[RMDB]
RNA sequence: GGGAACGACUCGAGUAGAGUCGAAAAACCUCCACCUUCGGGUGGAGGUCGUGCGUAGCUGCGUUAAAUUAAUAGCUAGGCUUAAUAAAUUUAUUUAACGCAUAAAACUGUGUUUCGACACAGUUAAGAGUAAAGAUACUUUCGAGUAUCUUUACUCAAAAGAAACAACAACAACAAC
Reactivity to DMS in 0.01 (KOAc 150mM, MgCl2 10mM, bicine 150mM(pH8.5), 24C), signal-to-noise 5, nucleotides 027 to 126: a040c000c000u000c000c000a000c000c000u000u000c170g030g020g040u000g010g010a010g010g010u000c030g000u010g010c100g020u010a080g010c150u000g010c000g000u000u000a000a000a020u000u010a080a080u000a060g010c030u010a110g020g010c030u000u000a060a110u010a070a090a110u000u000u000a030u000u000u000a010a000c000g010c010a110u010a040a070a040a020c000u000g010u000g000u000u000u020c140g010a050c000a010c000a010g010u000u000a020a110
Reactivity to 2A3 in 0.01 (KOAc 150mM, MgCl2 10mM, bicine 150mM(pH8.5), 24C), signal-to-noise 5, nucleotides 027 to 126: a000c000c000u000c000c010a010c000c000u030u070c220g160g000g010u010g000g000a010g000g000u000c020g030u060g040c090g130u130a060g050c070u040g010c010g000u000u010a010a010a020u030u080a040a070u040a050g040c070u060a080g180g070c000u060u130a090a020u160a140a260a030u080u050u020a010u010u010u010a000a010c000g000c010a010u170a050a210a010a000c000u000g010u010g010u010u070u090c160g030a010c000a000c000a000g000u000u030a050a020